[RMDB]
An RNA of 207 nucleotides, treated with 2A3 and read out base by base. The data come from the RNA Mapping Database (RMDB), library RNAMAK.
RNA sequence: GGGAACGACUCGAGUAGAGUCGAAAAACCCAAUCUUCGGAUUGGGUAAAAAACCUUUGUGCUACAUAGAAGCAUCGAUCUUACACCUCCCAUUGGGAGGGUAAGGGAGCUUCUAAGUGUAGCACUCUGGUAAAAAACCAUGACUUCGGUCAUGGAACCAUUGUUGGGGUUUCGACCCCAACAAUGGAAAAGAAACAACAACAACAAC
Reactivity to 2A3 in 0.01 (KOAc 150mM, MgCl2 10mM, bicine 150mM(pH8.5), 24C), signal-to-noise 1, nucleotides 027 to 156: a010c000c010c000a000a000u040c050u120u120c270g050g000a000u000u010g010g010g020u000a070a050a000a000a020a000c000c000u000u020u010g000u000g000c010u000a000c000a010u090a000g010a000a000g000c010a070u300c010g080a070u020c010u020u000a010c140a300c070c010u070c000c030c050a300u110u190g010g010g000a000g010g000g000u000a000a000g000g000g010a020g000c000u000u010c000u020a080a040g020u000g000u020a000g020c010a000c000u000c000u000g000g040u090a130a120a060a000a000a030c000c000a000u000g000a000c000u060u050c300g050g000u000c000a010u050g020g000a020a020